The record gives the reactivity of an RNA of 207 nucleotides to DMS and 2A3.
The reactions ran in a buffer of 150 mM KOAc, 10 mM MgCl2 and 150 mM bicine (pH 8.5), at 24 C.
For 2A3 the reverse transcriptase was SuperScript II with manganese.
For DMS the reverse transcriptase was MarathonRT.
It was measured as part of the RMDB library M2RFPK.
RNA sequence: GGGAACGACUCGAGUAGAGUCGAAAAGGGCCGUUCACUGGAUCCGAAGCCUCUAGAAGGAUAAUAUAGGCACUCCAUACCCUACUGCGACUCAAUACGUCCCCGUCGUACAGAAUGGUAACAUAUCGAACACAACCUAACUUCGGUUAGGUUGUAACCACCAAAAAAGAUUCGUCUUUUUUGGUGGAAAAGAAACAACAACAACAAC
Reactivity to DMS in 0.01 (KOAc 150mM, MgCl2 10mM, bicine 150mM(pH8.5), 24C), signal-to-noise 2, nucleotides 027 to 156: g010g010g030c000c000g020u000u000c020a130c090u000g000g040a150u030c000c060g010a090a160g030c010c020u000c030u020a040g010a240a120g020g000a140u000a070a090u000a100u020a110g030g040c020a070c020u000c010c020a130u000a060c050c000c030u000a100c070u010g020c020g000a070c000u010c060a050a120u030a090c070g050u000c000c000c000c110g000u000c060g000u000a180c120a100g000a060a070u030g030g020u010a030a150c120a130u000a110u000c030g000a100a130c140a080c030a000a050c000c000u000a010a010c000u010u000c300g050g030u000u030a000g000g020u000u010g000u000a020a120
Reactivity to 2A3 in 0.01 (KOAc 150mM, MgCl2 10mM, bicine 150mM(pH8.5), 24C), signal-to-noise 2, nucleotides 027 to 156: g020g010g000c070c090g100u110u110c080a050c090u050g050g000a060u240c040c040g010a030a030g030c040c000u020c030u050a180g050a260a020g080g040a030u090a190a050u130a090u060a090g010g020c030a040c100u000c010c000a020u070a110c010c000c010u050a100c030u050g020c030g020a010c020u030c060a080a190u140a150c060g060u070c000c000c000c000g080u010c030g020u010a050c000a080g110a080a090u100g060g000u090a060a000c010a040u070a070u160c050g060a070a010c030a000c000a090a010c000c000u000a000a010c010u080u050c070g060g000u000u000a000g020g000u020u000g010u000a000a010